[RMDB]
RNA sequence: GGGAACGACUCGAGUAGAGUCGAAAAGCAAAUCAAAAUAAGAGAGGAAAGGUAGGAGAUUAGAAUCCACAGGAAAUUGUCCUAUUGACACAAUAUGAUCGAAAUAACGACCACCAAAAUAAAAAAACAACCAAGUUAAGUUCGCUUAACUUGGUUGAAAAGAAACAACAACAACAAC
Reactivity to 2A3 in 0.01 (KOAc 150mM, MgCl2 10mM, bicine 150mM(pH8.5), 24C), signal-to-noise 1, nucleotides 027 to 126: g000c010a090a090a000u140c040a020a100a110a120u250a120a000g060a040g040a020g070g040a100a040a040g030g050u090a010g000g070a060g000a010u000u020a040g040a070a040u000c010c000a020c020a070g130g010a130a090a030u100u120g050u000c010c000u040a000u000u110g020a010c020a010c000a090a070u130a080u300g000a030u050c000g000a000a130a000u120a030a080c000g020a000c000c030a030c010c010a090a070a140a000u230a000a070a030a000a000a000a020
Reactivity to DMS in 0.01 (KOAc 150mM, MgCl2 10mM, bicine 150mM(pH8.5), 24C), signal-to-noise 1, nucleotides 027 to 126: g000c040a020a050a040u000c050a060a030a160a160u010a250a150g000a070g010a110g000g020a150a050a030g000g010u000a020g000g010a130g000a000u000u000a080g050a060a060u000c020c050a030c060a080g000g020a030a050a040u000u000g020u000c020c100u000a100u000u000g000a100c060a040c110a050a040u000a050u000g000a010u000c040g010a040a050a060u000a030a070c070g040a020c010c010a080c110c080a030a030a020a020u070a040a030a100a020a110a070a170
Record summary:
This 177-nucleotide RNA was probed chemically with 2A3 and DMS. The reactions ran in a buffer of 150 mM KOAc, 10 mM MgCl2 and 150 mM bicine (pH 8.5), at 24 C. For 2A3, 815 sequencing reads were counted.